[RMDB]
RNA sequence: GGGAACGACUCGAGUAGAGUCGAAAAUCAUUGAGAUGCUGGGCGCUAUGGUCAUCCUCCUCCGGCUGACCUCCUUCUCAGCUGCUGACCGGCGCCGCACAGGCGGCAUCUCAGCUUCGUGUGCAAAAAAAGAAUGGUCGGUUCGCCGACCAUUCAACUAUAUAAGGAUGUUCGCAUCCUUAUAUAGAAAAGAAACAACAACAACAAC
Reactivity to DMS in 0.01 (KOAc 150mM, MgCl2 10mM, bicine 150mM(pH8.5), 24C), signal-to-noise 2, nucleotides 027 to 156: u000c080a110u000u000g000a020g000a010u000g030c010u000g010g010g010c020g020c010u000a030u010g110g000u020c010a080u000c050c040u020c100c060u000c040c000g000g000c010u000g010a010c030c080u000c150c060u000u000c050u000c000a040g010c000u010g030c110u010g010a030c000c010g000g010c030g040c010c000g020c080a080c120a130g000g000c040g010g000c010a010u000c010u000c010a010g010c050u010u010c120g010u010g040u020g030c000a000a000a080a130a200a130a140g020a050a020u010g000g000u010c010g030g030u000u000c300g030c010c000g000a020c000c000a000u000u000c010a060a150
Reactivity to 2A3 in 0.01 (KOAc 150mM, MgCl2 10mM, bicine 150mM(pH8.5), 24C), signal-to-noise 1, nucleotides 027 to 156: u080c010a030u140u000g000a000g000a010u010g000c000u050g010g020g000c010g000c030u040a080u250g030g000u000c010a060u130c030c050u040c030c020u040c010c010g000g000c000u000g000a020c010c020u130c020c030u230u020c020u000c010a010g000c020u020g000c040u020g000a000c000c010g000g000c010g020c010c020g000c020a030c000a010g220g010c020g030g000c010a010u040c030u000c000a010g010c020u170u160c130g190u060g030u070g140c100a080a100a050a030a000a000a050g000a010a000u000g020g000u000c010g000g020u060u050c210g010c060c000g000a000c000c000a010u000u000c000a000a000